[RMDB]
RNA sequence: GGGAACGACUCGAGUAGAGUCGAAAAUAACAAAAACAAAUACGCGAGCCACGGAAAAGCCGGUCACCGUGGAGCGAAAUAAACGGUCAAAGAAGACCGGCAAGGCUGAAGAAAAACUUCAGCCAAACGCACUGGACGAGUUCGCUCGUUCAGUGCGAAAAGAAACAACAACAACAAC
Reactivity to 2A3 in 0.01 (KOAc 150mM, MgCl2 10mM, bicine 150mM(pH8.5), 24C), signal-to-noise 1, nucleotides 027 to 126: u070a000a100c120a060a130a160a010a000c090a000a190a010u200a060c040g050c040g010a020g030c000c000a000c010g000g000a040a090a000a000g000c000c010g040g000u030c030a000c000c000g000u000g070g000a000g000c010g130a200a000a100u200a030a130a000c020g080g030u120c120a000a070a000g230a140a000g000a110c010c000g000g000c010a000a000g000g000c000u020g000a000a000g020a000a010a040a070a030c000u000u000c000a000g000c000c000a000a000a000
Description
The data come from the RNA Mapping Database (RMDB), library OK1LIB. Structure probing data (2A3) for a 177-nucleotide construct. The reactions ran in a buffer of 150 mM KOAc, 10 mM MgCl2 and 150 mM bicine (pH 8.5), at 24 C. The 2A3 profile rests on 929 reads.